[RMDB]
RNA sequence: GGGAACGACUCGAGUAGAGUCGAAAAACUUUUCUUGUUGCCUGUGGCUAUUUGUUUGACUUAUGCAAACAUAGUCUACGAGCCCACUACUCCCAUUUCGUCAGCGCUGAUUGCAGUUGCAAAUUGGUUAUACGAUCCUUCGGGAUCGUAAAAAGAAACAACAACAACAAC
Reactivity to 2A3 in 0.01 (KOAc 150mM, MgCl2 10mM, bicine 150mM(pH8.5), 24C), signal-to-noise 3, nucleotides 027 to 129: a040c030u060u140u040u040c060u060u110g070u100u050g010c010c000u020g020u070g000g000c020u040a070u090u190u020g020u000u000u000g040a050c000u090u300a050u300g000c040a000a010a010c010a010u000a010g010u010c010u010a000c010g040a000g000c000c020c000a030c010u070a030c010u000c000c000c020a020u080u090u040c110g010u020c000a000g000c000g010c120u100g060a100u040u110g000c000a010g010u010u050g010c000a040a080a020u120u000g000g040u080u040a040
Reactivity to DMS in 0.01 (KOAc 150mM, MgCl2 10mM, bicine 150mM(pH8.5), 24C), signal-to-noise 3, nucleotides 027 to 129: a140c000u010u000u000u000c050u000u050g020u000u000g030c080c030u060g040u020g000g020c010u010a010u010u030u010g030u000u000u050g020a150c170u000u000a100u000g040c060a030a050a100c030a040u030a040g000u040c020u000a030c060g030a000g010c020c060c090a030c130u000a120c170u020c000c000c000a130u020u030u030c060g040u000c080a040g010c050g060c120u050g010a160u080u020g020c030a030g020u000u000g020c020a010a040a030u040u010g000g020u070u000a210